[RMDB]
RNA sequence: GGGAACGACUCGAGUAGAGUCGAAAAGAUAUGGACGGGGGUCCAACAGCUGUGGUUCGGAAACGAACCUGCAGACAUGGACUCUGUCCUAAGUCACUGGCUAUACACUCUUCGGAGUGUAUAGCAACACGGUAGUAUUCUUCGGAAUACUACCGUGAAAAGAAACAACAACAACAAC
Reactivity to DMS in 0.01 (KOAc 150mM, MgCl2 10mM, bicine 150mM(pH8.5), 24C), signal-to-noise 4, nucleotides 027 to 126: g020a030u000a190u000g000g010a000c000g010g000g000g000g020u000c000c000a030a110c300a190g000c000u000g000u000g010g010u000u000c000g020g010a080a110a150c000g010a010a000c000c010u010g040c000a010g000a050c100a150u000g010g000a060c000u000c000u000g010u000c000c000u000a010a060g000u000c020a200c150u010g010g010c000u000a000u000a000c010a010c010u010c000u000u010c220g030g000a030g030u000g010u020a000u000a000g010c000a040a050
Reactivity to 2A3 in 0.01 (KOAc 150mM, MgCl2 10mM, bicine 150mM(pH8.5), 24C), signal-to-noise 3, nucleotides 027 to 126: g000a010u040a020u060g010g020a030c070g070g010g000g030g070u070c050c060a110a100c160a110g060c010u000g020u030g040g020u000u000c000g020g000a030a020a030c010g000a010a000c000c020u100g000c010a010g070a180c100a130u060g000g000a000c000u000c010u030g000u000c000c000u000a060a010g020u010c020a010c230u150g170g000c010u000a000u000a010c010a000c010u020c010u040u170c300g060g000a010g010u000g000u000a000u000a000g000c000a000a000